[RMDB]
RNA sequence: GGGAACGACUCGAGUAGAGUCGAAAAGAUAUGGACCCUGAGACAUCAGGCACUCGGAAACGAGUGGCCGACGACGUCUAGGGUCCUAAGUCAAAGGGGUUUGUAUGGUUCGCCAUACAAACCCCAAGGAUAGCUAUGAGUUCGCUCAUAGCUAUCCAAAAGAAACAACAACAACAAC
Reactivity to DMS in 0.01 (KOAc 150mM, MgCl2 10mM, bicine 150mM(pH8.5), 24C), signal-to-noise 3, nucleotides 027 to 126: g010a060u010a300u000g000g000a020c000c000c000u000g000a040g010a010c000a030u000c010a170g010g000c000a030c000u000c000g000g000a100a070a160c000g010a010g010u000g010g020c000c000g020a110c290g010a020c040g020u000c000u000a030g000g010g010u000c000c000u000a000a070g010u010c020a040a130a130g010g010g010g000u010u000u000g010u000a010u000g000g010u000u020c260g010c000c000a020u000a010c000a000a010a000c000c000c000c000a000a000
Reactivity to 2A3 in 0.01 (KOAc 150mM, MgCl2 10mM, bicine 150mM(pH8.5), 24C), signal-to-noise 2, nucleotides 027 to 126: g010a020u060a030u100g000g000a000c060c000c000u050g300a060g000a040c030a050u110c030a050g000g020c000a000c010u000c000g030g030a060a070a020c020g000a000g010u040g040g110c000c010g040a050c090g020a010c030g010u000c010u000a000g000g010g000u000c000c000u000a000a010g030u020c020a020a060a140g000g000g000g010u000u000u000g000u000a000u000g000g050u040u100c270g070c120c000a000u000a000c000a000a010a000c000c000c000c000a010a000
The record gives the reactivity of an RNA of 177 nucleotides to DMS and 2A3. The RNA was probed in 150 mM KOAc, 10 mM MgCl2 and 150 mM bicine (pH 8.5) at 24 C. For DMS, 3,411 sequencing reads were counted. 2A3 adducts were read by reverse transcription with SuperScript II with manganese. The data come from the RNA Mapping Database (RMDB), library TTRDEL.